An RNA of 177 nucleotides, treated with 2A3 and DMS and read out base by base.
[RMDB]
RNA sequence: GGGAACGACUCGAGUAGAGUCGAAAAUAAGUCUUCUUCGGAAGACUUAAAAUAAGCUGAGCAAGCUAUGAGGUCAAUAUCGUCAUGCACAAUAGAAUAAAAAGCCGAAAAGGUUCGCCUUUUCGAAGUAUAGCUGUCUAUUCGUAGACAGCUAUACAAAAGAAACAACAACAACAAC
Reactivity to 2A3 in 0.01 (KOAc 150mM, MgCl2 10mM, bicine 150mM(pH8.5), 24C), signal-to-noise 2, nucleotides 027 to 126: u030a010a000g000u000c000u000u000c010u000u050c220g040g000a000a000g000a000c000u000u000a000a000a000a000u130a070a010g030c030u020g040a010g050c050a050a010g000c060u060a070u080g050a000g010g030u050c040a110a040u070a070u220c080g050u030c050a020u060g020c020a010c010a080a120u070a210g080a040a050u120a190a210a030a020a010g090c060c000g010a000a000a000a000g020g020u020u020c150g080c000c000u000u040u020u000c010g000a080a010
Reactivity to DMS in 0.01 (KOAc 150mM, MgCl2 10mM, bicine 150mM(pH8.5), 24C), signal-to-noise 3, nucleotides 027 to 126: u000a010a000g000u000c000u000u000c000u010u010c200g040g010a030a000g000a020c000u000u000a010a030a080a090u000a090a080g000c030u000g000a160g010c070a090a030g010c030u000a030u010g010a050g020g010u010c060a070a070u010a060u010c040g010u000c050a060u010g000c100a040c080a060a060u010a080g000a090a060u000a040a070a090a100a150g000c230c020g010a000a010a000a010g000g010u000u010c210g010c010c000u000u000u000u010c000g010a050a100